[RMDB]
RNA sequence: GGGAACGACUCGAGUAGAGUCGAAAAGAUUUUAACAGAUGGAGAUACACAAAUGUUUGAAUCCCAGUAACAAAAAUCCUGGUAUCUCGGGUAUACAGUAGUGCAGAUACUGUAUUUUUAAUGCUCCUUAGGUUUUCCAUCUUCGGAUGGAAAACAAUCUAGUUUACACGUUCGCGUGUAAACUAGAAAAAGAAACAACAACAACAAC
Reactivity to 2A3 in 0.01 (KOAc 150mM, MgCl2 10mM, bicine 150mM(pH8.5), 24C), signal-to-noise 1, nucleotides 027 to 156: g000a000u050u080u040u060a030a000c000a020g050a110u010g010g010a000g000a020u000a010c010a000c030a000a160a060u020g000u000u000u110g010a050a080u000c000c000c000a020g030u120a140a040c090a130a150a000a000a040u010c000c000u020g020g010u000a030u000c030u000c000g000g000g000u000a010u020a020c000a000g020u010a000g110u050g230c060a030g070a300u020a000c000u000g000u010a010u010u000u000u010u180a110a170u090g000c030u160c100c030u070u130a030g190g000u000u000u000u000c000c000a000u000c010u070u050c110g130g000a000u000g000g000a000a000a000a000c000a000a000